[RMDB]
The record gives the reactivity of an RNA of 177 nucleotides to DMS and 2A3. For 2A3, 2,620 sequencing reads were counted. For DMS, 4,680 sequencing reads were counted. Values cover nucleotides 27 to 126. Conditions: 150 mM KOAc, 10 mM MgCl2 and 150 mM bicine (pH 8.5), 24 C. The data come from the RNA Mapping Database (RMDB), library RFM100.
RNA sequence: GGGAACGACUCGAGUAGAGUCGAAAACGGGCCAACGCGCAUAGAUAAUCUGGUCGCACCGCUGCCCCACAAGGGCACCGACAGGCGCAUCACAGAUAUCACCGAAUGACUUCGGAGUGAUCUGGCGUAUAGGGGGUGGAUUCGUCCACCCCCUAUAAAAAGAAACAACAACAACAAC
Reactivity to DMS in 0.01 (KOAc 150mM, MgCl2 10mM, bicine 150mM(pH8.5), 24C), signal-to-noise 4, nucleotides 027 to 126: c130g010g010g020c000c050a090a070c100g000c040g040c060a120u020a160g000a090u020a100a050u000c030u010g000g000u000c000g020c030a060c060c020g040c230u000g000c030c000c000c020a100c250a170a300g000g000g000c010a010c080c030g000a060c180a120g000g020c010g030c130a090u060c070a140c030a010g010a010u000a060u030c050a170c000c020g000a000a040u000g020a240c200u020u010c000g000g010a070g040u020g000a040u000c030u010g000g010c120g010
Reactivity to 2A3 in 0.01 (KOAc 150mM, MgCl2 10mM, bicine 150mM(pH8.5), 24C), signal-to-noise 3, nucleotides 027 to 126: c020g030g060g020c010c000a120a120c030g040c010g000c050a050u060a140g060a040u100a080a160u080c010u040g040g010u030c020g020c040a040c020c010g000c010u020g000c000c000c010c010a070c000a070a030g000g000g000c010a010c010c020g020a030c030a060g100g000c010g000c030a030u120c030a030c000a010g010a000u010a000u030c010a010c000c000g020a080a040u160g150a100c090u020u010c020g000g010a020g010u020g020a050u030c030u020g030g000c030g030